[RMDB]
RNA sequence: GGGAACGACUCGAGUAGAGUCGAAAAGAUAUGGACGCUAGCUUUUGACGAUCUACGGUCGGAAACGACCGAAUAGAUCGAUAAGCUAGUCCUAAGUCAAAGCCUCGGCUCUUCGGAGCCGAGGCAAUCACUACUAAACCUUCGGGUUUAGUAGUGAAAAAGAAACAACAACAACAAC
Reactivity to 2A3 in 0.01 (KOAc 150mM, MgCl2 10mM, bicine 150mM(pH8.5), 24C), signal-to-noise 2, nucleotides 027 to 126: g020a010u120a050u220g000g000a020c130g000c230u060a000g020c020u070u130u060u220g230a130c060g000a000u000c000u000a020c020g000g000u010c010g050g020a110a080a050c010g000a000c000c000g000a030a040u020a000g000a000u020c000g010a000u010a010a000g020c000u010a000g000u000c010c000u000a080a020g050u020c040a190a010a030g040c010c010u030c000g050g000c040u020c000u130u160c300g110g020a000g000c000c000g010a000g000g000c010a000a000
Reactivity to DMS in 0.01 (KOAc 150mM, MgCl2 10mM, bicine 150mM(pH8.5), 24C), signal-to-noise 3, nucleotides 027 to 126: g010a080u010a300u010g000g010a070c170g030c130u000a000g020c000u000u000u000u010g010a220c150g010a010u000c000u010a060c000g010g000u000c000g000g000a090a080a160c000g000a010c000c000g010a050a070u010a000g000a000u000c000g000a050u000a000a000g010c010u000a030g010u000c000c010u000a080a230g010u000c040a070a180a160g010c000c000u000c000g000g000c010u000c000u000u020c150g030g000a020g000c000c000g000a000g000g020c000a000a010
Record summary: This 177-nucleotide RNA was probed chemically with 2A3 and DMS. It was measured as part of the RMDB library TTRDEL. Reactivities are rounded to 0.1 and cut off at 0 and 3. 2A3 is a SHAPE reagent: it acylates the 2'-hydroxyl of flexible nucleotides of all four kinds. The 2A3 profile rests on 2,571 reads. DMS adducts were read by reverse transcription with MarathonRT. Conditions: 150 mM KOAc, 10 mM MgCl2 and 150 mM bicine (pH 8.5), 24 C. For DMS, 2,182 sequencing reads were counted. 2A3 adducts were read by reverse transcription with SuperScript II with manganese.